[RMDB]
RNA sequence: GGGAACGACUCGAGUAGAGUCGAAAAUGCUUACGCUAAAGUUGCGUGAGUUCAGUUGAGCCUAGAGCUUGAGUGAUACUAUCUAGCUUAAGUUUUAGUCAUCUUUGGUAGUGUAGUUUUAAGACUUGACGCACCUUAAAGUGAAGUUUAGUCUAGUUCAUUUUACGCUGUUCGCAGCGUAAAAUGAAAAAGAAACAACAACAACAAC
Reactivity to 2A3 in 0.01 (KOAc 150mM, MgCl2 10mM, bicine 150mM(pH8.5), 24C), signal-to-noise 1, nucleotides 027 to 156: u110g000c000u000u000a000c030g000c080u130a240a090a200g230u260u150g010c020g010u030g000a000g000u080u080c050a080g050u120u120g020a030g050c000c000u010a030g000a000g050c000u000u000g000a000g000u010g010a020u030a180c030u000a050u100c000u020a000g080c000u000u020a000a010g050u000u000u000u120a040g060u000c090a120u010c120u010u030u130g040g000u030a030g010u000g010u060a040g030u020u010u010u030a020a020g010a000c000u000u000g000a000c000g010c040a000c010c030u020u150a090a100a010g000u030g010a170a040g050u020u040u060a000g000u030c000u020a000g070u000